[RMDB]
RNA sequence: GGGAACGACUCGAGUAGAGUCGAAAACUGAUUGAUUGAUUUGUUCAACAGUUGGAUUUAACACAUACUCACCAUCAAUACGGCCAACUUCAACACCAGCAAUCGGUCCGUUGAAUGGAAUAUCAGAGGAUACCACUGGAUUCGUCCAGUGGUAUCCAAAAGAAACAACAACAACAAC
Reactivity to 2A3 in 0.01 (KOAc 150mM, MgCl2 10mM, bicine 150mM(pH8.5), 24C), signal-to-noise 2, nucleotides 027 to 126: c000u020g030a160u020u050g050a080u020u020g050a040u140u130u300g070u030u060c010a000a000c000a040g020u020u040g020g020a020u020u110u180a270a040c010a020c000a090u050a190c020u040c020a080c000c000a060u010c040a000a130u060a130c020g020g000c000c010a030a040c010u140u080c040a000a130c040a090c100c000a020g170c050a080a080u140c030g000g120u030c070c000g010u030u010g050a060a060u030g030g050a050a060u100a130u090c050a000g000a000
Reactivity to DMS in 0.01 (KOAc 150mM, MgCl2 10mM, bicine 150mM(pH8.5), 24C), signal-to-noise 2, nucleotides 027 to 126: c000u000g000a140u010u000g000a030u010u000g010a110u000u000u000g020u010u000c020a030a080c030a020g000u000u000g020g000a090u000u000u030a070a150c160a090c050a060u000a080c070u030c060a240c040c010a020u000c040a080a120u000a060c070g000g000c010c010a050a090c180u010u000c170a100a070c100a080c140c130a050g000c110a040a040u010c120g000g010u010c010c030g030u020u000g000a060a060u000g000g000a080a060u000a050u000c110a030g010a250